An RNA of 177 nucleotides, treated with 2A3 and DMS and read out base by base.
RNA sequence: GGGAACGACUCGAGUAGAGUCGAAAAGAUAUGGAUCGGGCCAGGGAGAUGUCAUUCGGAAACGAAUGUCAUCGACGAUCUGGCCGAUCCUAAGUCAAACGAACAAAGGGUUCGCCCUUUGUUCGAACGUUCUGUAAAGGUUCGCCUUUACAGAACGAAAAGAAACAACAACAACAAC
Reactivity to 2A3 in 0.01 (KOAc 150mM, MgCl2 10mM, bicine 150mM(pH8.5), 24C), signal-to-noise 3, nucleotides 027 to 126: g010a000u050a020u070g010g010a000u010c090g110g290g200c020c010a010g050g020g040a120g010a020u000g010u020c000a010u000u000c000g010g010a050a050a040c010g000a010a000u000g010u030c000a000u010c010g040a070c020g030a060u010c010u000g010g000c000c010g000a000u000c000c000u010a040a010g010u010c040a090a050a140c020g010a010a000c000a000a000a000g060g030g030u080u130c280g220c010c010c020u000u000u000g000u000u000c000g000a020a020
Reactivity to DMS in 0.01 (KOAc 150mM, MgCl2 10mM, bicine 150mM(pH8.5), 24C), signal-to-noise 4, nucleotides 027 to 126: g010a020u000a240u010g000g000a000u010c000g000g010g030c000c000a010g000g000g010a090g010a020u000g010u000c000a010u010u000c000g010g000a060a040a140c000g000a000a010u000g000u000c000a000u000c010g010a090c290g010a070u000c000u000g000g010c010c000g010a000u010c000c000u000a000a050g000u010c000a130a120a300c030g000a010a000c010a010a020a020g010g010g020u000u020c300g000c000c000c000u000u000u000g000u010u000c000g020a030a110

The RNA was probed in 150 mM KOAc, 10 mM MgCl2 and 150 mM bicine (pH 8.5) at 24 C. DMS adducts were read by reverse transcription with MarathonRT. 2A3 adducts were read by reverse transcription with SuperScript II with manganese.